Source: RMDB library TTRDES, as collected in RNAgym. The record gives the reactivity of an RNA of 177 nucleotides to 2A3 and DMS.
RNA sequence: GGGAACGACUCGAGUAGAGUCGAAAAGAUAUGGAUACUCUAUAGCUCUAUAAUCUUUAUCGGAAACGAUAAAGGUAGAGCAUAUAGAGGUAUCCUAAGUCAAAAGAGGUGUCUUCGGACACCUCAACGCUUAAUAGAACUUCGGUUCUAUUAAGCGAAAAGAAACAACAACAACAAC
Reactivity to 2A3 in 0.01 (KOAc 150mM, MgCl2 10mM, bicine 150mM(pH8.5), 24C), signal-to-noise 3, nucleotides 027 to 126: g020a020u090a030u140g000g000a020u000a020c000u010c000u010a010u000a040g020c000u020c000u000a180u050a300a300u300c000u130u000u010a000u000c000g030g030a110a050a080c000g010a020u000a020a010a000g000g000u000a000g000a000g000c050a040u000a000u000a000g040a030g000g070u000a000u000c000c000u010a180a020g080u060c020a030a070a120a250g020a010g000g010u030g000u000c020u060u160c300g080g000a000c000a000c000c000u000c000a010a000
Reactivity to DMS in 0.01 (KOAc 150mM, MgCl2 10mM, bicine 150mM(pH8.5), 24C), signal-to-noise 2, nucleotides 027 to 126: g000a090u000a300u000g000g030a020u000a020c000u000c010u000a010u000a000g000c000u010c000u000a110u010a300a180u010c000u000u000u000a010u000c010g010g010a170a100a180c020g020a010u000a000a000a020g000g000u000a000g000a010g020c000a010u000a010u000a000g020a010g010g010u000a000u000c000c000u010a030a180g000u010c060a100a070a110a170g000a020g010g010u000g020u000c000u000u010c210g020g000a020c010a000c000c000u010c000a020a060